[RMDB]
RNA sequence: GGGAACGACUCGAGUAGAGUCGAAAAUAUGCGUGAUCAGAAGUAUGAUAUUCGCGAGGGCAAGAAACCUGGUGCUUUCGGUAACAUUGAGCGAUUCAUUUAUCUUAAGUCGAUAAAUGCUUAUUGCUCUCUUAGCGAUAUUGCGGCCUAUCACGCCGGAACAUUCAGUGUUCGCACUGAAUGUUCCAAAAGAAACAACAACAACAAC
Reactivity to 2A3 in 0.01 (KOAc 150mM, MgCl2 10mM, bicine 150mM(pH8.5), 24C), signal-to-noise 4, nucleotides 027 to 156: u300a080u140g000c000g000u010g000a020u050c200a040g080a140a020g070u110a060u150g080a040u030a060u100u190c010g010c030g030a020g000g010g000c050a060a040g030a120a110a050c030c050u090g080g030u090g000c040u050u070u090c060g050g050u070a090a030c020a080u040u090g010a000g010c020g000a000u030u040c010a000u010u010u010a000u010c020u060u150a160a130g080u130c010g030a000u010a030a010a000u010g000c010u060u080a030u040u010g000c000u000c000u000c010u020u100a020g000c000g020a020u000a020u040u080g050c050g030g030c000c010u000a000u010c000a000c010g000c010c010
Reactivity to DMS in 0.01 (KOAc 150mM, MgCl2 10mM, bicine 150mM(pH8.5), 24C), signal-to-noise 1, nucleotides 027 to 156: u000a090u000g010c000g020u010g000a020u010c070a050g030a280a150g010u020a030u000g010a080u000a040u000u000c000g080c040g000a140g000g010g000c090a030a090g000a170a090a050c070c030u000g040g020u000g000c020u000u000u010c120g050g010u000a030a030c080a040u000u010g010a010g010c000g040a120u000u000c000a050u000u000u000a000u000c000u010u000a080a190g020u010c230g020a020u000a010a050a000u000g010c210u000u000a100u000u000g000c010u000c020u010c020u000u010a180g030c010g030a080u000a070u000u000g010c050g010g010c120c010u000a200u000c040a030c030g000c020c120